[RMDB]
RNA sequence: GGGAACGACUCGAGUAGAGUCGAAAAUGAGACACCUUCGGGUGUCUCACAUUAAGCUGACCAGCUUUGAGGUCAAUAUCGUCAUGCACAAAUAGAAUAAAACAGCUUGCUCCUUCGGGAGCAAGAAUGUGUAAUUGCCAUUCGUGGCAAUUACACAAAAAGAAACAACAACAACAAC
Reactivity to 2A3 in 0.01 (KOAc 150mM, MgCl2 10mM, bicine 150mM(pH8.5), 24C), signal-to-noise 1, nucleotides 027 to 126: u050g000a010g000a000c010a000c000c020u000u020c200g030g020g000u000g000u000c000u000c000a000c000a000u070u030a060a010g010c030u030g010a050c000c030a010g050c000u140u060u190g140a100g000g040u050c020a050a120u110a080u140c050g060u000c040a060u070g100c160a060c060a050a090a000u170a110g100a140a070u130a110a120a000a040c020a010g030c000u000u040g000c000u000c000c000u050u050c150g150g020g010a000g060c000a000a010g000a000a000
Reactivity to DMS in 0.01 (KOAc 150mM, MgCl2 10mM, bicine 150mM(pH8.5), 24C), signal-to-noise 1, nucleotides 027 to 126: u000g010a020g020a000c000a010c000c000u000u000c280g040g020g030u000g020u010c000u010c000a000c070a050u030u000a070a050g000c020u000g020a140c050c020a160g000c050u000u000u000g000a080g010g000u000c040a090a070u000a050u000c060g020u000c060a060u000g020c090a050c110a070a050a110u000a050g010a090a080u020a040a070a050a120c150a050g000c000u000u000g000c020u000c010c000u000u010c220g000g000g000a000g020c000a000a020g000a030a050
The data come from the RNA Mapping Database (RMDB), library M2PK50. Structure probing data (2A3 and DMS) for a 177-nucleotide construct. 2A3 adducts were read by reverse transcription with SuperScript II with manganese. High 2A3 reactivity points to a flexible backbone, as in loops and unpaired stretches. Conditions: 150 mM KOAc, 10 mM MgCl2 and 150 mM bicine (pH 8.5), 24 C.